[RMDB]
Chemical mapping of a 177-nucleotide RNA with DMS and 2A3.
Reactivities are rounded to 0.1 and cut off at 0 and 3.
For DMS the reverse transcriptase was MarathonRT.
The 2A3 profile rests on 10,933 reads.
In probing experiments dimethyl sulfate is read out at A N1 and C N3, which are open when not base-paired.
RNA sequence: GGGAACGACUCGAGUAGAGUCGAAAAGCAAGGAGAACUCACCUGUCGUCGUCGACGAAGGCAUGUGAGCUUCCACUCGGUGAAGAGCGUCAGCGGACGGCCUCUGAGACGAGCGAUGGACAGUAGACAUUUAAUAGGGGUUCGCCCCUAUUAAAUGAAAAGAAACAACAACAACAAC
Reactivity to DMS in 0.01 (KOAc 150mM, MgCl2 10mM, bicine 150mM(pH8.5), 24C), signal-to-noise 9, nucleotides 027 to 126: g010c100a100a090g000g010a090g010a060a110c020u000c010a030c020c020u010g010u000c000g010u000c010g010u010c260g010a210c110g010a040a030g000g010c010a000u010g020u000g000a050g000c080u000u000c030c020a150c010u000c010g000g010u010g010a190a050g000a020g000c090g020u000c030a100g020c130g000g000a060c040g010g010c070c010u000c010u000g000a300g000a040c010g000a020g010c080g010a080u000g010g010a060c140a070g000u010a090g010a230
Reactivity to 2A3 in 0.01 (KOAc 150mM, MgCl2 10mM, bicine 150mM(pH8.5), 24C), signal-to-noise 6, nucleotides 027 to 126: g060c050a050a070g090g030a100g060a110a040c010u000c020a020c010c020u020g010u000c010g000u000c000g040u050c070g070a270c050g020a060a010g010g000c020a030u060g010u030g020a010g010c010u030u000c010c000a030c010u020c010g050g060u130g060a080a060g010a030g030c050g020u020c020a070g120c080g230g080a020c040g030g010c010c000u000c000u020g020a010g000a020c010g010a020g020c040g060a060u090g040g020a010c020a030g080u130a020g040a040